Record summary:
The record gives the reactivity of an RNA of 177 nucleotides to DMS and 2A3.
RNA sequence: GGGAACGACUCGAGUAGAGUCGAAAAUGUCAUUCAGCAUAACUGGCAUGAGUUGCGUUUAUUUAUGUGGGAUUACGUCGGCAUUGUCCGUACCACAAAACGCUUAGAGCGGGCUUUACGGCGCAUACUAAUGACCCGUAUUCGUACGGGUCAUUAGAAAAGAAACAACAACAACAAC
Reactivity to DMS in 0.01 (KOAc 150mM, MgCl2 10mM, bicine 150mM(pH8.5), 24C), signal-to-noise 5, nucleotides 027 to 126: u010g030u000c030a070u000u000c100a120g020c110a070u010a070a100c180u010g000g020c040a060u000g000a100g010u000u000g010c020g010u000u000u010a100u030u010u000a090u060g020u010g000g010g020a170u010u010a100c190g000u010c020g020g000c040a160u010u010g000u000c010c010g010u000a140c020c020a020c030a040a050a030a060c020g010c020u000u000a110g010a100g020c020g010g000g010c070u000u010u000a070c110g000g000c030g000c070a050u000a150
Reactivity to 2A3 in 0.01 (KOAc 150mM, MgCl2 10mM, bicine 150mM(pH8.5), 24C), signal-to-noise 4, nucleotides 027 to 126: u050g020u040c000a030u110u020c000a080g020c030a140u110a230a050c060u040g040g040c020a030u070g070a030g130u150u140g000c020g010u010u030u090a170u070u220u070a120u130g020u010g000g010g070a090u100u170a120c120g060u080c020g040g040c160a220u020u220g060u070c000c010g010u010a070c000c000a030c010a000a040a000a010c020g020c000u030u120a060g010a000g060c040g000g050g000c010u060u060u090a060c070g050g000c020g020c040a020u060a140

The reactions ran in a buffer of 150 mM KOAc, 10 mM MgCl2 and 150 mM bicine (pH 8.5), at 24 C. The 2A3 profile rests on 2,714 reads. It was measured as part of the RMDB library OK2TST. For 2A3 the reverse transcriptase was SuperScript II with manganese.